[RMDB]
RNA sequence: GGGAACGACUCGAGUAGAGUCGAAAACUGGUCACCAUGUAAUCAUUCAAUCUGCUACUAGUGAUCGGGAUACAGUAUUGGCUGUUGUGAGCAGAGUUAUGAAAGAUGGAAUUGUGCUUACCUUACAUGAUUAUGAUAGGUUCGCCUAUCAUAAUCAAAAAGAAACAACAACAACAAC
Reactivity to DMS in 0.01 (KOAc 150mM, MgCl2 10mM, bicine 150mM(pH8.5), 24C), signal-to-noise 9, nucleotides 027 to 126: c030u000g010g010u000c020a040c020c040a030u010g010u000a090a110u010c060a050u000u010c170a100a090u010c190u000g010c180u000a050c020u000a080g010u000g010a040u000c040g010g010g000a140u010a050c070a030g010u000a140u010u010g020g020c030u000g010u000u000g010u000g000a040g010c010a020g000a040g020u000u000a060u000g010a060a090a110g010a070u000g000g000a080a060u000u000g010u000g010c040u000u000a090c050c080u000u010a090c200a150
Reactivity to 2A3 in 0.01 (KOAc 150mM, MgCl2 10mM, bicine 150mM(pH8.5), 24C), signal-to-noise 8, nucleotides 027 to 126: c020u020g010g010u020c010a010c040c020a040u080g020u080a080a070u060c040a040u110u100c070a060a140u030c030u060g010c010u030a030c000u020a060g040u020g080a050u060c000g010g020g010a080u120a090c030a010g070u070a160u220u220g160g010c030u010g020u110u040g020u030g030a000g000c010a010g010a000g050u060u060a090u100g060a070a030a020g080a020u150g060g080a040a040u050u060g100u010g030c020u030u050a060c000c010u030u040a050c040a130